The record gives the reactivity of an RNA of 207 nucleotides to 2A3 and DMS.

[RMDB]
RNA sequence: GGGAACGACUCGAGUAGAGUCGAAAAAAGACCAACUCAUCAGUUCAGGGGUCAGAGAUUUAUAUAGUUAAAGGACAAGUGUGUGUUUACCUGAGUUUAAAGAGCAAAGUUGCCUCUGGAAAGAAGCCCUCACUGGAGGCUCUGGCAUUUGAAAUGGACCGUGAAUAUAUUUCGAUAUAUUCACGGUAAAAGAAACAACAACAACAAC
Reactivity to 2A3 in 0.01 (KOAc 150mM, MgCl2 10mM, bicine 150mM(pH8.5), 24C), signal-to-noise 2, nucleotides 027 to 156: a000a000g100a080c040c020a050a040c040u010c050a070u040c020a010g030u120u020c010a010g010g000g000g040u030c060a030g000a000g010a050u130u180u100a090u120a020u060a110g030u070u100a060a090a120g030g020a050c030a130a090g000u010g010u030g000u000g040u060u080u000a050c000c010u030g030a030g050u130u090u040a120a150a020g110a010g000c060a120a230a060g000u070u020g030c000c000u000c030u010g010g000a060a110a040g040a120a000g010c000c000c000u000c020a020c020u030g040g000a000g010g020c010u000c010u010g010g000c010a030u020u060u080g160a110a100a040u130g090g000
Reactivity to DMS in 0.01 (KOAc 150mM, MgCl2 10mM, bicine 150mM(pH8.5), 24C), signal-to-noise 2, nucleotides 027 to 156: a110a100g000a210c010c000a100a070c000u000c080a070u000c050a090g000u000u000c030a070g000g010g030g030u000c050a110g010a100g010a110u000u000u000a120u010a160u000a170g000u000u000a060a070a120g020g010a090c030a050a120g000u000g020u020g000u000g000u000u000u000a050c010c000u010g000a090g000u030u000u000a030a100a160g000a110g050c040a040a110a170g030u000u000g000c030c010u000c040u000g030g000a050a060a120g000a090a140g000c010c000c000u000c040a120c040u020g020g010a060g010g000c030u020c020u000g020g030c000a130u010u000u010g000a120a080a110u000g010g010
Annotation
The reactions ran in a buffer of 150 mM KOAc, 10 mM MgCl2 and 150 mM bicine (pH 8.5), at 24 C. Reactivities are given for positions 27 through 156. DMS adducts were read by reverse transcription with MarathonRT.